[RMDB]
RNA sequence: GGGAACGACUCGAGUAGAGUCGAAAAUCGUGCUGCUCCAGGGUUCUUGGUGUGGGUUCCGUCUCACACUUCACACCCUCAAAGUAGCCUUCCUGCAGUUUUGUCUGCAGGUUGUGUGGAAAGUCUGCCCUGCAAAGGAUUUCGAUCCUUUGCAGGGAAAAGAAACAACAACAACAAC
Reactivity to 2A3 in 0.01 (KOAc 150mM, MgCl2 10mM, bicine 150mM(pH8.5), 24C), signal-to-noise 1, nucleotides 027 to 126: u150c030g040u080g020c000u000g000c030u010c010c010a010g000g000g000u000u020c000u000u030g000g000u000g020u000g050g020g040u300u300c050c060g210u020c000u000c030a000c000a000c000u020u220c000a230c000a000c010c000c000u000c010a000a070a000g020u000a020g010c000c000u000u000c000c000u000g000c000a000g000u040u110u300u270g250u230c000u000g000c010a000g000g000u000u020g070u020g020u020g080g020a150a000a000g010u010c020u000g040
Reactivity to DMS in 0.01 (KOAc 150mM, MgCl2 10mM, bicine 150mM(pH8.5), 24C), signal-to-noise 1, nucleotides 027 to 126: u040c140g020u030g000c000u000g010c020u000c100c300a040g000g020g010u000u000c000u000u030g000g040u010g050u000g010g010g000u010u070c220c170g000u010c000u010c010a000c010a010c000u010u020c010a020c120a020c000c020c010u020c010a080a050a020g020u010a010g000c000c010u000u000c000c000u030g000c000a000g000u010u020u030u020g000u000c000u000g010c000a020g020g000u000u000g000u000g030u000g030g000a070a100a130g010u000c040u010g000
Chemical mapping of a 177-nucleotide RNA with 2A3 and DMS. The RNA was probed in 150 mM KOAc, 10 mM MgCl2 and 150 mM bicine (pH 8.5) at 24 C. For 2A3, 581 sequencing reads were counted.